[RMDB]
RNA sequence: GGGAACGACUCGAGUAGAGUCGAAAAGGGGUCCCUCGGGCGAUCGACGAAGCCAUUGACAUGGUCUGAAGCCUCCACGGACCAACAGCAAUGGCAGAGAUCGCAGAGGGACGGAGGCACCCAAAGCUUUCACAUUAGUUCGCUAAUGUGAAAGCAAGUUACCAGUCCAGUUCGCUGGACUGGUAACAAAAGAAACAACAACAACAAC
Reactivity to 2A3 in 0.01 (KOAc 150mM, MgCl2 10mM, bicine 150mM(pH8.5), 24C), signal-to-noise 1, nucleotides 027 to 156: g050g010g050g000u030c000c060c000u020c060g300g280g000c000g000a000u000c000g180a260c020g020a130a000g000c000c020a010u010u020g040a080c210a240u280g010g000u000c000u000g000a060a020g010c000c000u040c020c000a040c000g000g000a000c060c020a030a050c040a000g180c010a000a020u010g000g010c010a010g010a000g000a030u000c010g010c000a000g000a000g010g000g000a000c010g000g000a000g030g000c000a030c000c000c000a020a060a070g000c000u000u000u020c000a000c000a020u010u010a000g030u050u120c220g020c140u010a000a000u010g000u000g020a000a000a000g000c000a000a000
Background
This 207-nucleotide RNA was probed chemically with 2A3. It was measured as part of the RMDB library RNAMAK. 2A3 adducts were read by reverse transcription with SuperScript II with manganese.